Conditions: 150 mM KOAc, 10 mM MgCl2 and 150 mM bicine (pH 8.5), 24 C. An RNA of 177 nucleotides, treated with DMS and 2A3 and read out base by base.
[RMDB]
RNA sequence: GGGAACGACUCGAGUAGAGUCGAAAAGAAAAGAGCGUAAUCGCGUCUUGACGUGAGUGAGCCUAGACUGUAGACUAUCCCAAGUGGGAUAGUAUAUCUCACAAUACGCUGAUCUACAGUCAAAAGAAUCGGGUCCAUGAUUCGUCAUGGACCCGAUAAAAGAAACAACAACAACAAC
Reactivity to DMS in 0.01 (KOAc 150mM, MgCl2 10mM, bicine 150mM(pH8.5), 24C), signal-to-noise 1, nucleotides 027 to 126: g000a040a050a060a040g100a030g000c030g060u000a030a300u000c000g000c000g000u000c110u000u000g000a010c080g070u000g000a020g000u000g010a050g000c300c100u010a090g000a000c000u000g000u000a000g000a000c080u000a000u010c040c040c000a200a150g070u260g000g000g000a000u000a070g000u000a040u000a000u030c020u000c000a000c000a280a060u020a000c070g000c060u000g000a040u000c000u000a000c020a000g000u000c040a250a040a070a070g010a170
Reactivity to 2A3 in 0.01 (KOAc 150mM, MgCl2 10mM, bicine 150mM(pH8.5), 24C), signal-to-noise 2, nucleotides 027 to 126: g260a000a080a000a000g020a010g000c000g010u010a060a050u030c000g000c000g000u010c030u270u300g060a010c010g000u000g000a000g000u010g000a000g020c020c030u050a070g030a000c000u000g010u000a000g000a000c000u000a000u010c000c040c060a220a130g300u300g060g000g000a000u000a000g000u000a070u010a000u020c010u000c000a000c000a010a050u040a010c000g020c100u030g000a060u000c000u000a000c000a000g030u030c010a030a000a070a000g140a020
For DMS the reverse transcriptase was MarathonRT.